[RMDB]
RNA sequence: GGGAACGACUCGAGUAGAGUCGAAAAGACAAUAGCGUAGGGAACCAAGCAAAGAGGUAAGAAAUCCCUCGGUAGAAGGCUUGGUUCUAGCCGUGGGAAGAAGAAGUCCCACUCCCUACGCCGAUAAGUUCCGAGUAUGAUUCGUCAUACUCGGAACAAAAGAAACAACAACAACAAC
Reactivity to 2A3 in 0.01 (KOAc 150mM, MgCl2 10mM, bicine 150mM(pH8.5), 24C), signal-to-noise 2, nucleotides 027 to 126: g060a020c060a060a110u080a100g000c000g010u000a010g000g000g000a010a010c000c000a000a010g030c010a000a160a070g010a010g070g010u100a150a100g140a200a170a060u100c010c000c010u000c000g080g020u090a080g060a270a050g100g000c010u000u000g000g000u030u000c000u010a000g000c000c030g000u000g010g000g030a010a040g040a100a000g100a050a010g080u010c020c010c000a000c040u000c000c020c010u020a000c000g000c000c010g050a080u070a160a030
Reactivity to DMS in 0.01 (KOAc 150mM, MgCl2 10mM, bicine 150mM(pH8.5), 24C), signal-to-noise 2, nucleotides 027 to 126: g010a220c130a110a090u030a200g010c000g030u000a000g000g000g000a040a030c000c000a010a010g010c030a090a090a170g000a010g000g000u000a070a130g010a070a080a230u000c150c000c000u000c000g000g020u020a100g000a080a070g000g000c000u000u020g000g020u010u000c060u000a040g020c210c150g000u000g020g000g000a020a080g000a100a130g010a100a090g010u000c000c000c020a050c010u000c000c010c000u000a000c000g020c020c110g000a080u010a050a060

Source information
Chemical mapping of a 177-nucleotide RNA with 2A3 and DMS. Conditions: 150 mM KOAc, 10 mM MgCl2 and 150 mM bicine (pH 8.5), 24 C. The DMS profile rests on 1,458 reads.